[RMDB]
RNA sequence: GGGAACGACUCGAGUAGAGUCGAAAAAUGAUGAGUGUCCCUUCAUCGACAUAGCCCCUCAACGCCUUCCUGACACCCGCGAUGCUGUCGGCUCCAACCGCUGUGUUAUAAGCUGGCAUAUCACCGAGAUCUCACUAUUCUUCGGAAUAGUGAGAUCAAAAGAAACAACAACAACAAC
Reactivity to 2A3 in 0.01 (KOAc 150mM, MgCl2 10mM, bicine 150mM(pH8.5), 24C), signal-to-noise 1, nucleotides 027 to 126: a030u070g010a010u040g000a000g020u110g030u020c000c010c000u000u000c010a010u010c000g030a040c040a150u210a040g050c000c010c030c030u030c030a010a060c050g000c000c000u000u050c020c040u020g010a020c010a050c010c000c010g040c040g030a050u030g000c050u010g000u030c010g030g000c000u040c010c020a000a030c050c000g080c180u060g090u040g030u090u110a190u020a090a000g000c000u020g010g020c010a020u020a030u060c060a040c030c060g070a090
Reactivity to DMS in 0.01 (KOAc 150mM, MgCl2 10mM, bicine 150mM(pH8.5), 24C), signal-to-noise 3, nucleotides 027 to 126: a100u000g030a020u000g000a050g000u000g020u000c010c010c010u030u000c020a020u000c000g010a110c200a070u000a130g000c050c010c010c070u000c050a060a100c140g010c080c020u000u010c020c020u010g000a090c110a050c030c020c010g020c080g020a040u010g000c090u010g000u010c030g000g000c040u000c120c160a040a060c030c040g000c090u000g000u000g000u000u010a100u000a090a080g010c010u000g010g010c030a040u000a060u000c040a110c050c040g020a210